An RNA of 177 nucleotides, treated with 2A3 and DMS and read out base by base. Conditions: 150 mM KOAc, 10 mM MgCl2 and 150 mM bicine (pH 8.5), 24 C. Source: RMDB library OK2TRN, as collected in RNAgym.
RNA sequence: GGGAACGACUCGAGUAGAGUCGAAAACAGUUUAUUGCUCAUUGAAGACAGAAUGAAUGCAGAAAAGGCUGAAUUCUGUAAUAAAAGCAAACAGCCUGGCAUAGCAGUGAGCCAGCAGAGCAGAUGGCAUUCCUCGACUAUUCGUAGUCGAGGAAUGAAAAGAAACAACAACAACAAC
Reactivity to 2A3 in 0.01 (KOAc 150mM, MgCl2 10mM, bicine 150mM(pH8.5), 24C), signal-to-noise 2, nucleotides 027 to 126: c030a020g020u110u070u130a180u130u080g000c000u000c080a100u000u070g060a030a010g040a020c040a030g000a000a020u020g010a010a020u080g010c010a010g300a230a200a080a060g090g000c010u010g010a030a030u030u000c000u020g010u000a000a030u060a010a060a000a000g020c000a050a070a000c010a010g010c050c000u000g000g000c010a060u090a130g050c080a040g150u090g210a020g000c020c010a010g010c030a000g010a010g000c050a020g000a140u130g030g000
Reactivity to DMS in 0.01 (KOAc 150mM, MgCl2 10mM, bicine 150mM(pH8.5), 24C), signal-to-noise 3, nucleotides 027 to 126: c070a120g010u010u000u000a090u000u010g010c010u010c090a140u000u010g010a150a180g000a010c030a010g010a040a030u010g000a230a200u020g000c010a020g020a100a100a120a140g000g020c000u000g010a110a050u000u000c010u010g000u000a040a070u000a070a040a060a120g010c030a030a050a100c120a100g020c110c010u000g010g000c040a080u010a050g010c050a060g000u000g000a120g010c040c020a050g010c080a090g010a040g020c030a060g000a110u010g000g020